[RMDB]
RNA sequence: GGGAACGACUCGAGUAGAGUCGAAAAGAGCGAGACCGGUUGCACGGCUUUGUGUUUGCCGACCGAUGACGGCUCGAUCGUCAAGAUCGAAGCAGGUGCUGUUGGCCGUCCGUACCCUGGCGUGGACUCGUAUUGCAACGUUCGCGUUGCAAUACGAAAAAGAAACAACAACAACAAC
Reactivity to 2A3 in 0.01 (KOAc 150mM, MgCl2 10mM, bicine 150mM(pH8.5), 24C), signal-to-noise 4, nucleotides 027 to 126: g070a020g050c040g000a100g040a150c030c060g040g000u060u110g010c040a020c040g080g010c020u060u100u100g070u030g060u040u080u110g030c010c000g000a030c010c040g040a080u140g060a010c000g030g020c030u020c000g000a000u000c010g080u100c090a080a060g000a030u080c020g010a070a000g020c030a060g020g160u070g040c020u050g030u110u090g010g020c000c030g010u020c000c020g010u060a090c010c010c030u050g000g030c030g040u050g000g050a030c030
Reactivity to DMS in 0.01 (KOAc 150mM, MgCl2 10mM, bicine 150mM(pH8.5), 24C), signal-to-noise 3, nucleotides 027 to 126: g000a120g000c040g000a050g000a060c080c050g010g010u030u010g020c050a040c050g000g000c030u010u000u010g020u030g010u040u010u000g000c050c010g030a090c070c060g000a060u040g010a030c070g000g020c020u000c020g010a020u000c000g010u040c140a070a090g000a020u000c020g020a080a100g000c030a050g040g010u010g000c010u000g020u010u010g000g010c010c020g010u000c030c050g000u010a120c060c040c030u000g010g000c070g000u000g000g020a160c110
Structure probing data (2A3 and DMS) for a 177-nucleotide construct. 2A3 adducts were read by reverse transcription with SuperScript II with manganese. The DMS profile rests on 8,681 reads. Source: RMDB library OK1LIB, as collected in RNAgym.